Structure probing data (DMS and 2A3) for a 177-nucleotide construct. Conditions: 150 mM KOAc, 10 mM MgCl2 and 150 mM bicine (pH 8.5), 24 C.
[RMDB]
RNA sequence: GGGAACGACUCGAGUAGAGUCGAAAAAGCCAAUGCGGUGAACCAGAUUAUUUUUUUCGUCAUUGUGUCAUCAUCAAUGUUAAGGGUCUUUUUCUUUGUCGGGAAAAAGACCGUUGAUCACGGCCUGAAAAGUACCAGUUUUCGAACUGGUACUUUUAAAAGAAACAACAACAACAAC
Reactivity to DMS in 0.01 (KOAc 150mM, MgCl2 10mM, bicine 150mM(pH8.5), 24C), signal-to-noise 7, nucleotides 027 to 126: a150g010c020c010a070a060u020g010c110g010g010u000g000a060a100c080c060a100g000a100u020u020a010u000u000u010u000u010u010u010c100g010u000c030a050u010u010g010u010g010u000c080a060u020c090a060u010c050a050a050u010g000u010u000a050a060g010g010g010u000c000u000u000u000u000u000c000u000u000u020g010u030c210g020g010g000a000a010a000a010a000g010a000c000c000g010u000u000g000a030u010c110a080c100g000g000c000c070u000g000
Reactivity to 2A3 in 0.01 (KOAc 150mM, MgCl2 10mM, bicine 150mM(pH8.5), 24C), signal-to-noise 6, nucleotides 027 to 126: a000g040c030c010a040a070u190g010c070g020g010u040g010a030a030c020c020a040g030a100u050u090a160u100u130u050u020u010u040u090c070g050u040c050a060u050u050g020u050g040u100c030a060u030c000a010u010c020a060a080u080g050u110u170a070a060g100g000g000u000c000u000u010u010u010u000c010u070u120u200g200u240c130g010g000g000a000a000a000a000a000g000a010c000c000g000u000u010g000a000u050c030a000c100g030g000c010c030u050g020
Reactivities are given for positions 27 through 126.